[RMDB]
Source: RMDB library OK2TRN, as collected in RNAgym. The record gives the reactivity of an RNA of 177 nucleotides to DMS.
RNA sequence: GGGAACGACUCGAGUAGAGUCGAAAAUAACUACUUUGAUAUACUUUAAGGGCUUUACCAACUCCAACUAUGUUAAAUUGAGCAGGUUGAAUUGACCAUGCAGAUGGCCAGUGCUGUACAGAAAUGAUCAUGCACAGUGUUUCGACACUGUGCAUGAAAAAGAAACAACAACAACAAC
Reactivity to DMS in 0.01 (KOAc 150mM, MgCl2 10mM, bicine 150mM(pH8.5), 24C), signal-to-noise 1, nucleotides 027 to 126: u000a060a160c030u000a070c050u000u000u000g030a070u000a090u000a070c070u000u000u000a050a120g030g000g010c050u010u000u010a080c030c030a060a070c100u000c030c050a030a100c070u010a070u030g000u010u000a080a080a160u060u010g000a020g020c040a040g010g000u000u000g030a080a030u000u030g000a020c030c010a050u040g000c140a100g010a070u000g000g000c010c020a030g010u010g010c000u000g020u010a050c100a090g010a020a070a070u060g020a120